[RMDB]
RNA sequence: GGGAACGACUCGAGUAGAGUCGAAAAUCAUGAGUGACCUUACACUCAUGAGCGUACUGUUACUGCAAACAGUGCGGAGUCUAGUGUAAGGUCACUGGACUGACUAGUGUUUGCAGUAACACUGGUAGCACUGCAUUCUAUUCGUAGAAUGCAGUGCAAAAGAAACAACAACAACAAC
Reactivity to 2A3 in 0.01 (KOAc 150mM, MgCl2 10mM, bicine 150mM(pH8.5), 24C), signal-to-noise 1, nucleotides 027 to 126: u080c010a020u080g050a010g030u020g020a080c000c040u060u140a020c020a000c000u020c030a010u030g000a010g000c000g010u020a030c000u020g000u000u010a000c000u000g020c000a000a000a010c010a010g050u000g020c050g010g070a090g070u030c030u060a030g000u000g020u000a080a120g120g000u030c010a000c000u010g000g010a000c010u010g000a010c000u030a040g030u000g000u000u010u000g000c000a000g010u010a000a000c010a000c000u020g040g000u020a040
Reactivity to DMS in 0.01 (KOAc 150mM, MgCl2 10mM, bicine 150mM(pH8.5), 24C), signal-to-noise 2, nucleotides 027 to 126: u020c080a070u010g010a040g020u000g010a080c090c050u010u010a060c000a000c000u010c220a040u000g000a070g010c040g010u000a030c060u000g000u000u010a030c020u000g000c020a020a000a010c000a030g010u000g010c040g000g000a100g000u000c020u000a020g020u000g010u000a050a060g000g000u000c000a000c000u000g010g010a090c120u000g010a070c020u000a010g020u000g020u000u000u010g000c010a020g000u000a020a010c010a020c000u010g000g000u000a110

An RNA of 177 nucleotides, treated with 2A3 and DMS and read out base by base. The data come from the RNA Mapping Database (RMDB), library OK2TRN. Values cover nucleotides 27 to 126.